Structure probing data (2A3 and DMS) for a 207-nucleotide construct. The reactions ran in a buffer of 150 mM KOAc, 10 mM MgCl2 and 150 mM bicine (pH 8.5), at 24 C.

RNA sequence: GGGAACGACUCGAGUAGAGUCGAAAAGACAAUCCAGGGAACCGGAUGUCAUCACGUUGUUGCAGUACCAGAUGGCAUCUUAAAUCCGAUCUGCAAAUAAGCAUGUAGAAAGCUGAUGUGAGCUUUAAAAACGUGGUGCUGUUCGCAGCACCACGAAUCAGAUAGUUCUGUUCGCAGAACUAUCUGAAAAAGAAACAACAACAACAAC
Reactivity to 2A3 in 0.01 (KOAc 150mM, MgCl2 10mM, bicine 150mM(pH8.5), 24C), signal-to-noise 2, nucleotides 027 to 156: g050a020c010a040a030u110c030c010a030g070g000g030a040a010c030c050g020g000a000u000g010u030c000a010u010c020a020c160g050u070u040g070u100u050g000c090a080g110u090a060c000c050a060g010a010u000g000g000c000a000u030c000u000u020a060a070a000u060c020c000g030a080u030c010u050g000c000a010a110a130u150a170a040g040c060a060u040g010u020a070g140a140a060a000g000c020u060g040a070u180g180u100g070a010g020c030u020u120u250a060a080a020a000a000c010g030u020g000g000u000g000c020u020g000u050u070c260g020c060a000g020c010a000c000c030a000c000g000a000a000
Reactivity to DMS in 0.01 (KOAc 150mM, MgCl2 10mM, bicine 150mM(pH8.5), 24C), signal-to-noise 2, nucleotides 027 to 156: g020a100c030a040a100u000c040c010a130g010g010g000a110a150c090c110g000g000a050u000g010u000c040a050u020c000a300c170g020u000u000g000u000u000g000c010a120g030u000a080c040c080a120g000a040u000g020g020c030a060u000c010u000u000a040a080a130u000c000c020g000a100u000c020u010g040c020a060a060a130u000a080a270g010c100a130u000g000u000a050g010a060a070a100g000c010u000g020a160u010g020u000g000a050g000c040u000u000u010a020a050a030a070a080c030g050u030g040g010u000g030c000u000g010u010u000c300g010c000a030g000c010a000c000c000a000c010g000a000a040

The 2A3 profile rests on 980 reads.